RNA sequence: GGGAACGACUCGAGUAGAGUCGAAAACAAGAACGGAUAUUACCCUGAGCACAUGAUAAAUCCUAACGCAGAGGAGACUUACCUUGCGUCCACUCUAUCCUCAGAGAUUAUUAUAAAUGUCAAAGACGUUCAAGGUACUGUUCGCAGUACCUUGAACAAAAGAAACAACAACAACAAC
Reactivity to 2A3 in 0.01 (KOAc 150mM, MgCl2 10mM, bicine 150mM(pH8.5), 24C), signal-to-noise 2, nucleotides 027 to 126: c050a010a050g060a200a040c010g010g010a010u020a110u170u140a090c020c010c000u000g020a050g050c070a040c020a110u050g020a020u080a080a090a040u030c020c050u060a110a000c020g000c050a020g030a040g280g020a030g080a110c030u080u140a050c000c000u040u040g010c000g000u010c000c000a010c010u000c010u010a050u040c000c030u040c020a030g000a010g000a080u060u030a020u140u040a060u170a100a300a010u090g070u030c040a060a040a060g040a080c110
Reactivity to DMS in 0.01 (KOAc 150mM, MgCl2 10mM, bicine 150mM(pH8.5), 24C), signal-to-noise 2, nucleotides 027 to 126: c040a090a080g020a110a040c060g000g010a120u010a090u010u000a040c080c000c020u000g010a130g000c180a100c010a060u020g000a000u000a070a080a060u010c060c010u020a090a090c060g000c080a020g070a070g040g030a210g010a060c090u020u000a070c050c010u000u000g000c030g010u000c090c040a070c050u020c020u000a050u010c000c010u010c040a050g000a060g000a030u000u000a050u000u010a200u010a100a080a060u000g010u010c020a030a040a120g010a080c130